[RMDB]
RNA sequence: GGGAACGACUCGAGUAGAGUCGAAAACGAGACCGACGGCCGGAUCAUCGGUCACGUCGAGGACGGGCGUUCGGUGGAGAUCCGCGGUCUUUCGCUGUCCUGAGACACUUCCUGUAACUGGGAACGGACGUCCAUUUACCUUCGGGUAAAUGGACGUAAAAGAAACAACAACAACAAC
Reactivity to DMS in 0.01 (KOAc 150mM, MgCl2 10mM, bicine 150mM(pH8.5), 24C), signal-to-noise 2, nucleotides 027 to 126: c030g000a060g000a020c010c000g000a060c020g000g000c180c000g050g000a190u000c060a040u030c010g000g000u000c180a030c070g010u000c000g000a080g000g000a030c090g000g000g030c080g000u000u010c000g010g000u040g000g040a160g010a150u000c000c000g050c030g000g000u000c000u030u020u010c100g050c000u000g020u010c000c000u000g010a220g000a160c190a060c080u000u000c000c000u010g050u050a080a170c240u000g000g010g000a060a050c070g000g000
Reactivity to 2A3 in 0.01 (KOAc 150mM, MgCl2 10mM, bicine 150mM(pH8.5), 24C), signal-to-noise 3, nucleotides 027 to 126: c010g010a010g030a000c000c020g110a220c030g100g060c130c070g070g050a090u100c010a010u020c040g020g020u070c050a000c050g030u050c020g010a090g030g160a070c080g030g010g030c000g010u050u030c010g040g000u040g060g060a110g020a090u000c000c030g000c000g020g010u000c000u020u070u090c100g050c030u100g010u060c000c000u020g030a030g010a070c110a050c100u010u040c000c010u100g040u140a160a190c130u090g000g000g010a020a040c030g050g090
Structure probing data (DMS and 2A3) for a 177-nucleotide construct. Conditions: 150 mM KOAc, 10 mM MgCl2 and 150 mM bicine (pH 8.5), 24 C. For 2A3, 1,615 sequencing reads were counted.